RNA sequence: GGGAACGACUCGAGUAGAGUCGAAAAAGGGGAAGAAAUCAUGGUACACCCAGAGCUUUCCAGUAUGGGUCCACUGACCUUCCCUUGGACAGAGCUCAGUUCUGUGGCCAACCCAAGUGCAAGGAAGGCUGGGAAAUGUCACUUAGUCAUGUACCCAUCAUGCAAUCCGAUUCGUCGGAUUGCAUGAAAAAGAAACAACAACAACAAC
Reactivity to 2A3 in 0.01 (KOAc 150mM, MgCl2 10mM, bicine 150mM(pH8.5), 24C), signal-to-noise 1, nucleotides 027 to 156: a010g010g000g000g010a020a010g030a000a150a000u060c010a040u010g050g030u140a070c090a000c060c000c040a040g030a020g160c040u160u090u080c060c120a020g010u070a050u060g000g000g000u000c010c010a030c150u000g030a030c000c010u000u000c000c000c000u010u000g010g000a020c010a030g080a040g030c010u010c150a090g030u300u000c040u040g000u010g050g000c040c000a090a180c150c000c010a040a000g060u040g150c050a060a000g040g090a040a020g000g110c110u120g060g010g000a040a040a040u110g040u130c040a000c110u070u050a010g010u040c020a040u090g040u090a050c080c020c000a010
The record gives the reactivity of an RNA of 207 nucleotides to 2A3. Reactivities are given for positions 27 through 156. The reactions ran in a buffer of 150 mM KOAc, 10 mM MgCl2 and 150 mM bicine (pH 8.5), at 24 C. For 2A3, 537 sequencing reads were counted.